[RMDB]
RNA sequence: GGGAACGACUCGAGUAGAGUCGAAAAGUAUUGGCAUUCUAGGUUAGCAUGUAGGAGCGGAAGAGGGCGACUGUAUUGCGUAGCGAGAGGUGAAAGUUGACGACCUACGUAGGACAAACCGAAGCGAUCAUCAAGUAGUCUUCGGACUACUUGAUGAAAAAGAAACAACAACAACAAC
Reactivity to DMS in 0.01 (KOAc 150mM, MgCl2 10mM, bicine 150mM(pH8.5), 24C), signal-to-noise 2, nucleotides 027 to 126: g000u000a080u010u000g010g010c050a070u000u000c040u020a090g010g020u000u000a080g030c030a040u010g030u020a120g000g000a120g020c080g000g030a080a100g020a080g030g000g010c090g000a080c050u000g000u000a030u010u000g030c050g020u000a070g000c050g030a090g000a080g000g010u000g020a040a050a180g010u000u030g030a180c160g010a110c190c030u000a030c030g000u010a120g000g010a050c040a030a100a090c040c050g000a110a090g010c120g010a090
Reactivity to 2A3 in 0.01 (KOAc 150mM, MgCl2 10mM, bicine 150mM(pH8.5), 24C), signal-to-noise 2, nucleotides 027 to 126: g020u040a070u150u140g030g000c040a040u000u050c040u030a040g010g140u040u070a020g000c060a050u030g040u070a030g000g100a050g050c060g030g070a060a010g010a020g030g000g000c030g030a020c020u030g020u020a050u010u150g010c030g020u010a010g000c010g030a050g000a020g000g050u050g040a120a040a020g040u050u030g020a070c020g010a010c010c010u000a020c010g030u030a020g020g040a010c020a030a050a000c040c020g010a000a000g080c020g010a070